[RMDB]
RNA sequence: GGGAACGACUCGAGUAGAGUCGAAAACAGUAGCAACAAUACACAUCUCAGGGUACUUAAUAAUAGGUGUACCUACAGCUGCUCCUAAUGAACCGAAGUUAGUAACUGAAAUAGUACCUUUAUUCAACAUGCUCAACAAAUUCGUUUGUUGAGCAUGAAAAGAAACAACAACAACAAC
Reactivity to 2A3 in 0.01 (KOAc 150mM, MgCl2 10mM, bicine 150mM(pH8.5), 24C), signal-to-noise 3, nucleotides 027 to 126: c050a030g040u040a030g070c030a000a070c010a030a110u090a130c040a010c000a150u070c110u020c100a010g040g000g060u010a000c030u080u060a110a010u140a180a090u030a230g070g030u030g030u030a050c000c010u070a020c030a020g010c020u020g000c000u000c000c020u200a200a100u150g030a030a030c020c070g000a040a000g020u020u160a020g020u130a080a050c040u030g030a050a040a090u110a010g040u020a000c000c000u060u040u110a130u110u080c010a010a000
Reactivity to DMS in 0.01 (KOAc 150mM, MgCl2 10mM, bicine 150mM(pH8.5), 24C), signal-to-noise 4, nucleotides 027 to 126: c180a090g020u000a040g000c050a100a060c110a120a110u000a050c100a050c070a080u000c040u020c070a080g010g000g020u000a020c020u000u000a090a060u010a110a100u010a040g020g000u000g010u000a050c060c030u000a050c080a050g000c070u000g010c010u010c090c030u010a060a070u000g010a060a110c080c060g000a050a050g010u000u000a060g000u000a060a050c050u000g010a050a050a080u000a050g010u000a040c020c020u000u000u000a080u010u010c140a060a160